[RMDB]
RNA sequence: GGGAACGACUCGAGUAGAGUCGAAAAUACCGCAGGCCUGCGGUGCGGCAGUGUGGAGACCUGCCGUAAGCCGUGUUGUUUUGACAACCGGGAGAAAGCGUAUGCGGAGGCAGCGCUUUCAGCGUCUAAAAGUAUGGGAUCUUCGGAUCCCAUACAACAGUAGAACCGUGUUCGCACGGUUCUACUGAAAAGAAACAACAACAACAAC
Reactivity to 2A3 in 0.01 (KOAc 150mM, MgCl2 10mM, bicine 150mM(pH8.5), 24C), signal-to-noise 1, nucleotides 027 to 156: u090a000c000c000g000c010a020g060g080c000c160u050g010c040g000g000u010g020c010g000g000c010a010g010u100g000u120g210g040a080g050a080c010c000u020g020c020c040g040u000a010a020g030c060c000g060u060g020u060u010g000u000u080u090u140g130a030c000a000a040c080c010g020g040g000a150g000a010a000a000g000c010g000u030a270u180g000c060g020g090a100g200g000c000a000g010c010g000c010u000u000u000c060a020g080c020g030u010c030u090a030a000a040a090g010u000a000u000g000g000g030a010u000c020u030u060c130g060g010a000u000c000c030c000a000u000a000c000a000a000

An RNA of 207 nucleotides, treated with 2A3 and read out base by base. Reactivities are given for positions 27 through 156. The RNA was probed in 150 mM KOAc, 10 mM MgCl2 and 150 mM bicine (pH 8.5) at 24 C. It was measured as part of the RMDB library M2RFPK. 2A3 adducts were read by reverse transcription with SuperScript II with manganese.